[RMDB]
RNA sequence: GGGAACGACUCGAGUAGAGUCGAAAAUAACCUUUGCUGAACCAUGGUGUGAAAGUGCCUCCAGGCAGAAACUCAGGGUACUUGUAAGGCUCACCUUCUUUGUUUUCUCUCUGGUCACAGCCCUGCAGAUACGCGAAAAUUUCGAUUUUCGCGUAUCAAAAGAAACAACAACAACAAC
Reactivity to DMS in 0.01 (KOAc 150mM, MgCl2 10mM, bicine 150mM(pH8.5), 24C), signal-to-noise 3, nucleotides 027 to 126: u000a120a180c020c020u000u000u010g020c030u010g010a140a060c100c040a050u010g010g010u000g010u010g010a050a040a100g020u010g000c060c050u000c090c150a060g010g000c080a050g030a040a090a070c070u010c060a070g010g000g020u000a060c060u000u010g000u010a090a090g000g010c060u000c090a060c060c040u000u000c060u010u010u010g010u010u000u010u000c030u000c020u000c040u000g010g010u000c070a100c120a110g010c020c020c010u000g020c150a150
Reactivity to 2A3 in 0.01 (KOAc 150mM, MgCl2 10mM, bicine 150mM(pH8.5), 24C), signal-to-noise 2, nucleotides 027 to 126: u080a010a070c010c000u040u050u120g020c040u060g030a040a000c010c010a100u060g010g080u070g020u010g110a200a040a000g040u030g040c000c010u030c060c010a030g030g020c040a060g140a110a090a010c070u070c120a070g050g000g020u020a050c000u070u090g080u170a080a060g050g000c030u020c010a080c010c000u030u020c050u060u110u100g110u040u040u080u050c020u010c000u020c010u050g050g020u020c020a010c020a090g040c000c010c000u010g050c000a020

Chemical mapping of a 177-nucleotide RNA with DMS and 2A3.
Conditions: 150 mM KOAc, 10 mM MgCl2 and 150 mM bicine (pH 8.5), 24 C.
For 2A3, 2,455 sequencing reads were counted.
For DMS, 2,753 sequencing reads were counted.
Source: RMDB library OK2TRN, as collected in RNAgym.
DMS adducts were read by reverse transcription with MarathonRT.